Chemical mapping of a 177-nucleotide RNA with 2A3.
[RMDB]
RNA sequence: GGGAACGACUCGAGUAGAGUCGAAAAGCUCGGAGACGAGCAAGGCUGACAAAACACUGUCCCAACCUCCACGUGGUGUCGGCUGGAUAAUGCUGCAUUAUGUUGCAUUUAUCAACAGGGAAGAAAACCUCGCUAAAUGCUUCGGCAUUUAGCGAGGAAAAGAAACAACAACAACAAC
Reactivity to 2A3 in 0.01 (KOAc 150mM, MgCl2 10mM, bicine 150mM(pH8.5), 24C), signal-to-noise 2, nucleotides 027 to 126: g010c020u020c010g020g000a130g030a070c010g000a000g010c000a020a100g000g000c010u030g000a000c000a020a300a030a050c040a050c030u020g000u000c000c000c000a020a030c030c040u060c050c040a090c120g010u050g020g010u020g010u030c000g020g000c000u030g000g000a000u000a000a000u000g000c000u000g000c000a080u000u160a080u300g020u000u040g000c000a010u180u010u080a050u040c000a000a070c000a010g000g000g070a000a130g110a020a140a010a050
Source information:
For 2A3 the reverse transcriptase was SuperScript II with manganese.